RNA sequence: GGGAACGACUCGAGUAGAGUCGAAAAUGUCCUGACGGCUACAGACCUGACUAACUCAGAGCUUCAGGCCAUUCACAUCGCUGAAGAAGGUCGCGACCAGUCUACAGGUUUAGCCAAGCAGUACGCGCCUUGGCGCGUAGUUCGCUACGCGCCAAGGAAAAGAAACAACAACAACAAC
Reactivity to DMS in 0.01 (KOAc 150mM, MgCl2 10mM, bicine 150mM(pH8.5), 24C), signal-to-noise 6, nucleotides 027 to 126: u000g000u010c020c000u000g000a120c160g010g030c010u000a110c300a060g000a060c030c010u000g010a110c120u020a100a070c090u020c090a070g000a240g000c000u020u010c070a160g000g000c030c020a100u000u000c060a060c070a130u010c250g000c040u000g030a040a030g020a060a140g020g050u010c020g000c090g010a150c180c230a050g010u010c040u020a160c070a040g000g000u000u000u020a060g010c010c000a090a160g000c030a060g010u030a040c110g000c130g000
Reactivity to 2A3 in 0.01 (KOAc 150mM, MgCl2 10mM, bicine 150mM(pH8.5), 24C), signal-to-noise 9, nucleotides 027 to 126: u130g010u030c020c000u010g020a030c060g010g010c000u050a030c050a150g070a060c010c010u020g090a120c050u070a100a010c030u030c140a030g020a020g120c030u090u070c050a050g050g000c020c010a050u060u050c010a020c020a190u220c150g040c180u020g020a040a020g050a080a070g070g020u030c030g010c040g090a060c030c020a010g030u040c030u060a040c020a040g010g000u030u040u070a000g000c010c000a020a020g060c000a000g020u070a020c040g020c000g030